[RMDB]
RNA sequence: GGGAACGACUCGAGUAGAGUCGAAAACUGUAUUUUGCAAAUGUUUAUGUCCGUCAUCUUGCAAUUUGGAUUUCAACUCACGUGAUAAAACACCAGUAGUGCGCAUGCGUGCAUGCAAAUUCAUAACUACAGCUGCGACAUUCGUGUCGCAGCUGUAAAAAGAAACAACAACAACAAC
Reactivity to 2A3 in 0.01 (KOAc 150mM, MgCl2 10mM, bicine 150mM(pH8.5), 24C), signal-to-noise 1, nucleotides 027 to 126: c080u120g100u130a230u050u030u000u090g140c040a010a010a010u130g090u030u170u130a130u230g000u000c030c000g030u040c000a040u000c080u070u000g000c030a030a010u110u300u210g000g000a080u040u040u040c010a000a040c000u020c080a030c000g050u080g060a120u140a120a120a000a000c000a000c020c000a090g190u200a040g000u190g070c000g000c000a030u030g050c230g080u050g000c000a000u070g020c030a000a000a030u070u000c070a000u160a030a080c010

The data come from the RNA Mapping Database (RMDB), library OK1LIB. Structure probing data (2A3) for a 177-nucleotide construct. The 2A3 profile rests on 340 reads. Values cover nucleotides 27 to 126.